[RMDB]
Structure probing data (2A3 and DMS) for a 177-nucleotide construct. The reactions ran in a buffer of 150 mM KOAc, 10 mM MgCl2 and 150 mM bicine (pH 8.5), at 24 C. Values cover nucleotides 27 to 126. It was measured as part of the RMDB library OK2TRN. For 2A3, 5,244 sequencing reads were counted.
RNA sequence: GGGAACGACUCGAGUAGAGUCGAAAAACGAAGGGGCGCUUGGCCUUUCCUUCGUGUCUGAAAUUCAUGUUGGCGGUGAAAAGGCCAAAGUCGCGGCCAUGAGCCCGGACGGCUACACCGUCGUCCACGUAGGAUAUCAGUUCGCUGAUAUCCUACGAAAAGAAACAACAACAACAAC
Reactivity to 2A3 in 0.01 (KOAc 150mM, MgCl2 10mM, bicine 150mM(pH8.5), 24C), signal-to-noise 4, nucleotides 027 to 126: a010c000g000a030a010g010g000g010g020c060g050c230u110u130g160g010c040c000u040u060u060c000c000u000u020c010g010u010g050u000c030u020g120a150a140a130u250u160c070a070u200g100u140u160g090g000c020g000g030u020g030a070a060a080a090g020g000c000c030a030a060a020g030u010c020g040c140g070g030c000c070a190u200g020a040g000c010c010c020g000g000a030c040g030g010c010u030a040c010a010c020c030g000u000c000g000u010c010c010a080
Reactivity to DMS in 0.01 (KOAc 150mM, MgCl2 10mM, bicine 150mM(pH8.5), 24C), signal-to-noise 6, nucleotides 027 to 126: a030c020g010a030a010g010g030g000g010c060g010c270u000u000g010g010c010c000u000u000u000c020c000u000u000c000g010u000g010u000c090u000g010a070a080a100u010u010c140a070u020g010u000u000g010g010c000g000g010u000g000a050a060a050a080g010g020c000c000a020a080a110g020u010c020g020c220g010g010c010c030a100u000g000a220g010c020c000c030g000g000a040c110g010g000c010u000a170c050a030c030c020g010u000c010g000u000c070c140a180